RNA sequence: GGGAACGACUCGAGUAGAGUCGAAAAUACGCACACAAGUUGAUUUAGCUAAAGAAGUCUUUUCUAUACCAGUAGAUAUUGCCUCACAACCUUUAGCCACUACUCUCAUAGGAGAACUUGCAAGCUAGGCUACGUGCUCAUUCGUGAGCACGUAGCCAAAAGAAACAACAACAACAAC
Reactivity to 2A3 in 0.01 (KOAc 150mM, MgCl2 10mM, bicine 150mM(pH8.5), 24C), signal-to-noise 1, nucleotides 027 to 126: u030a000c010g000c000a030c000a050c000a090a030g150u170u050g200a300u030u090u200a050g000c000u050a020a020a020g040a010a010g230u080c120u110u070u000u000c000u000a000u010a040c000c030a040g000u000a000g000a030u110a080u220u220g000c000c000u050c000a000c070a000a100c000c000u150u150u000a000g000c020c000a010c070u190a050c000u060c000u000c040a000u000a130g000g120a000g000a040a000c000u000u070g050c000a030a030g210c010u010a000

An RNA of 177 nucleotides, treated with 2A3 and read out base by base.
The data come from the RNA Mapping Database (RMDB), library OK1LIB.
For 2A3 the reverse transcriptase was SuperScript II with manganese.
For 2A3, 393 sequencing reads were counted.